Structure probing data (DMS and 2A3) for a 170-nucleotide construct. For 2A3 the reverse transcriptase was SuperScript II with manganese. Reactivities are given for positions 27 through 129.
RNA sequence: GGGAACGACUCGAGUAGAGUCGAAAAUGAUCUUCUUGUUGGAUCGCCGGAGAUCCUUCUCGAGCAGUCGCCUUUUCUUCCUUUCUUCUACCCACUGUUCGAGGAUCUCCUCCCUCUCCUUCGAGGACAACCGGGUGGUUCGCCACCCGGAAAAGAAACAACAACAACAAC
Reactivity to DMS in 0.01 (KOAc 150mM, MgCl2 10mM, bicine 150mM(pH8.5), 24C), signal-to-noise 2, nucleotides 027 to 129: u140g030a000u020c010u070u010c130u000u000g070u000u000g030g020a020u010c060g070c110c160g050g000a050g010a030u010c000c140u020u070c210u040c020g000a000g000c040a090g040u070c280g000c060c050u030u020u110u000c070u040u020c020c100u030u000u020c070u020u030c150u050a120c090c020c050a110c040u000g020u000u040c080g020a030g010g010a010u000c020u010c010c080u030c020c010c010u030c110u010c060c010u030u060c160g080a100g040g030a060c180a080a050
Reactivity to 2A3 in 0.01 (KOAc 150mM, MgCl2 10mM, bicine 150mM(pH8.5), 24C), signal-to-noise 4, nucleotides 027 to 129: u110g010a020u000c020u170u020c010u010u170g020u040u040g050g000a000u000c000g050c090c030g040g000a010g010a000u000c020c030u150u080c090u030c040g000a000g000c010a010g020u070c050g090c030c030u030u110u040u040c030u040u090c010c000u080u060u090c040u050u000c030u060a100c000c010c000a010c010u010g000u040u000c000g010a000g000g000a010u000c000u000c000c000u010c000c000c000u060c020u020c010c010u020u080c100g070a100g050g010a030c010a020a030